Conditions: 150 mM KOAc, 10 mM MgCl2 and 150 mM bicine (pH 8.5), 24 C. Structure probing data (DMS and 2A3) for a 177-nucleotide construct. For DMS, 24,378 sequencing reads were counted. Source: RMDB library RFMREP, as collected in RNAgym.
RNA sequence: GGGAACGACUCGAGUAGAGUCGAAAAAGGCGCUGUAGAACUUAAUUGUUCUGAUAGAGCAGCGAGUCGUGCAUGCUAGUCUAACAUUUCUUGCUACCUAGUAUCUUUAGAAGAUUUCCCUCCCUUACAAUACAUAUCUGUUCGCAGAUAUGUAUUGAAAAGAAACAACAACAACAAC
Reactivity to DMS in 0.01 (KOAc 150mM, MgCl2 10mM, bicine 150mM(pH8.5), 24C), signal-to-noise 9, nucleotides 027 to 126: a090g010g010c020g010c010u000g010u000a010g000a020a010c010u000u000a100a150u010u000g010u000u000c010u000g010a090u010a070g010a120g010c010a100g010c010g000a050g010u000c020g020u000g010c150a070u000g010c010u000a020g000u000c070u000a040a050c040a050u000u010u000c140u010u000g010c030u000a050c130c010u000a040g010u000a030u000c040u000u000u010a100g010a100a110g000a100u000u000u000c010c000c000u000c020c010c010u010u000a120
Reactivity to 2A3 in 0.01 (KOAc 150mM, MgCl2 10mM, bicine 150mM(pH8.5), 24C), signal-to-noise 9, nucleotides 027 to 126: a010g100g000c030g010c020u030g040u090a010g000a010a000c010u030u060a100a120u300u060g000u010u000c000u000g030a140u080a120g090a010g030c000a000g020c000g010a010g030u030c020g010u040g030c020a030u050g010c000u020a010g020u020c030u050a060a030c040a100u080u130u080c060u070u060g010c000u020a040c000c000u000a020g020u020a040u040c010u050u130u050a130g030a220a020g010a090u040u020u020c010c000c000u020c000c010c010u010u010a030